This 207-nucleotide RNA was probed chemically with 2A3 and DMS. Values cover nucleotides 27 to 156. DMS adducts were read by reverse transcription with MarathonRT. For 2A3 the reverse transcriptase was SuperScript II with manganese. The reactions ran in a buffer of 150 mM KOAc, 10 mM MgCl2 and 150 mM bicine (pH 8.5), at 24 C. For DMS, 2,784 sequencing reads were counted. Source: RMDB library RNAMAK, as collected in RNAgym.
RNA sequence: GGGAACGACUCGAGUAGAGUCGAAAAUCCUAAGUCUUCUCCUAAGGCUCCAUCGAUCAAGGUUGUCAGAACUCGGAAACGAGUUCUUGGAUUUACCUUGGGAGGAGCCGAAGGAGAAGAUAUGGAAAAUCUCUGCGAACUUCGGUUCGCAGAGAAACUAAUGACACAACUUCGGUUGUGUCAUUAGAAAAGAAACAACAACAACAAC
Reactivity to 2A3 in 0.01 (KOAc 150mM, MgCl2 10mM, bicine 150mM(pH8.5), 24C), signal-to-noise 2, nucleotides 027 to 156: u030c010c000u040a160a000g020u030c000u000u000c000u020c000c000u040a040a040g000g020c000u010c020c000a300u300c040g090a060u080c010a010a000g030g000u010u000g030u010c000a000g000a000a000c010u010c000g000g020a070a070a070c010g000a010g020u020u010c010u020u040g030g000a010u110u140u210a020c000c000u000u000g000g000g010a030g010g000a000g000c010c000g000a000a000g000g010a000g010a000a000g000a000u000a000u010g000g040a010a040a080a120u010c010u000c010u000g000c020g000a010a000c000u040u130c290g120g000u010u000c010g000c000a000g000a000g010a000a000a010
Reactivity to DMS in 0.01 (KOAc 150mM, MgCl2 10mM, bicine 150mM(pH8.5), 24C), signal-to-noise 1, nucleotides 027 to 156: u000c010c000u000a100a230g010u000c000u010u000c030u000c000c000u010a040a300g000g020c000u030c000c000a240u000c090g000a110u000c010a040a020g010g030u000u000g010u010c010a080g000a010a010c010u000c000g000g010a120a120a300c000g030a030g010u000u000c000u000u010g030g010a060u000u010u000a020c000c000u010u000g050g000g010a090g010g000a040g020c020c030g000a090a030g000g010a010g050a010a020g010a000u000a060u010g000g000a130a080a200a130u000c000u000c000u000g020c000g000a030a020c010u000u000c300g040g060u000u000c010g030c000a000g020a020g000a010a050a070